[RMDB]
Structure probing data (DMS) for a 177-nucleotide construct. The data come from the RNA Mapping Database (RMDB), library M2PK90.
RNA sequence: GGGAACGACUCGAGUAGAGUCGAAAAUUAAAAUGAUCGCAGCUGAAAUGGCGGACGCUAUGGUCUCCCUGACGGGAGGGACUCCAGUCCAAAGAGACGACUAUCCCACCAUAAGUUUGCCAAAAAAACCGUGAGGUAGAUUCGUCUACCUCACGGUAAAAGAAACAACAACAACAAC
Reactivity to DMS in 0.01 (KOAc 150mM, MgCl2 10mM, bicine 150mM(pH8.5), 24C), signal-to-noise 1, nucleotides 027 to 126: u030u030a000a080a040a120u000g060a030u000c060g020c100a050g000c090u030g020a100a070a070u020g000g000c000g000g030a000c040g020c090u000a020u000g000g000u010c060u000c010c010c010u010g020a130c270g020g020g000a090g030g010g000a040c030u010c100c210a050g010u000c000c060a020a110a110g000a120g000a050c030g000a040c090u000a160u000c010c000c080a090c020c050a000u010a040a120g000u010u000u000g020c010c030a020a050a100a020a150a130

The RNA was probed in 150 mM KOAc, 10 mM MgCl2 and 150 mM bicine (pH 8.5) at 24 C. For DMS, 565 sequencing reads were counted. Values cover nucleotides 27 to 126.